Chemical mapping of a 177-nucleotide RNA with DMS and 2A3.
The RNA was probed in 150 mM KOAc, 10 mM MgCl2 and 150 mM bicine (pH 8.5) at 24 C.
The data come from the RNA Mapping Database (RMDB), library RFMREP.
For 2A3 the reverse transcriptase was SuperScript II with manganese.
The DMS profile rests on 3,510 reads.
RNA sequence: GGGAACGACUCGAGUAGAGUCGAAAAGCCGGCUUGGCACUCGCGAACACCGCGAUUUCACUUAUAACUCGCGGCGUUAGCUCUGUGUCAAACCGGCAAAAGGUAUCUCUACUUCGGUAGAGAUACCCACAGAAUGAUUCUUCGGAAUCAUUCUGUGAAAAGAAACAACAACAACAAC
Reactivity to DMS in 0.01 (KOAc 150mM, MgCl2 10mM, bicine 150mM(pH8.5), 24C), signal-to-noise 2, nucleotides 027 to 126: g010c010c010g010g010c040u000u000g000g000c010a010c020u000c130g000c000g000a020a010c010a020c010c000g000c000g000a010u000u000u000c220a180c290u010u020a060u010a050a040c180u000c000g010c000g000g000c000g020u000u000a050g000c000u010c050u010g010u000g000u000c010a000a000a020c010c000g000g000c000a000a010a060a050g010g000u000a000u000c000u000c000u000a000c000u000u010c160g030g020u000a010g000a010g000a000u000a010c000c000
Reactivity to 2A3 in 0.01 (KOAc 150mM, MgCl2 10mM, bicine 150mM(pH8.5), 24C), signal-to-noise 3, nucleotides 027 to 126: g010c000c010g000g010c020u000u000g010g010c000a000c010u020c020g000c000g010a000a010c010a000c010c000g020c000g010a010u020u070u080c130a100c130u240u240a090u090a300a030c030u000c010g000c000g000g000c000g000u000u000a000g000c010u040c090u200g010u010g010u000c000a000a010a000c000c000g000g000c000a000a000a000a000g000g000u010a000u010c000u000c000u000a000c010u030u090c190g070g000u000a000g000a000g000a000u000a000c000c000